Chemical mapping of a 177-nucleotide RNA with 2A3 and DMS. Conditions: 150 mM KOAc, 10 mM MgCl2 and 150 mM bicine (pH 8.5), 24 C. DMS adducts were read by reverse transcription with MarathonRT. For 2A3 the reverse transcriptase was SuperScript II with manganese. It was measured as part of the RMDB library M2PK50. The 2A3 profile rests on 22,596 reads.
RNA sequence: GGGAACGACUCGAGUAGAGUCGAAAAGGUAGGGCAUUCGUGCCCUACCACACCUCUAAGCAGAUUGGCGACGACGACGUCGCGGCCCACGUUUACCAACAACUACUCUCUCCUUCGGGAGAGAGAAUCUAAAACAGUGUUUCGACACUGUUUUAGAAAAAGAAACAACAACAACAAC
Reactivity to 2A3 in 0.01 (KOAc 150mM, MgCl2 10mM, bicine 150mM(pH8.5), 24C), signal-to-noise 9, nucleotides 027 to 126: g010g000u010a000g010g010g000c010a010u040u080c190g100u050g010c000c000c000u000a000c000c000a000c000a000c000c000u030c050u080a090a070g050c040a030g060a300u130u180g110g000c010g000a010c000g030a040c060g050a050c050g010u020c010g010c010g030g010c010c010c000a050c040g010u030u070u080a220c050c010a040a050c020a020a020c040u130a060c000u030c000u000c000u010c010c000u030u050c220g080g000g000a000g000a000g000a000g000a000a010
Reactivity to DMS in 0.01 (KOAc 150mM, MgCl2 10mM, bicine 150mM(pH8.5), 24C), signal-to-noise 8, nucleotides 027 to 126: g000g020u000a000g010g000g030c000a030u000u010c210g020u000g010c000c000c000u000a000c000c000a050c140a050c040c010u000c140u010a090a110g020c100a080g000a090u010u000g010g010c010g010a040c020g010a100c260g000a060c080g020u000c020g020c020g010g010c010c010c030a290c070g000u000u000u000a120c030c020a060a060c140a060a040c130u010a150c000u000c000u000c000u000c000c000u000u000c150g020g010g000a010g000a010g000a000g010a030a050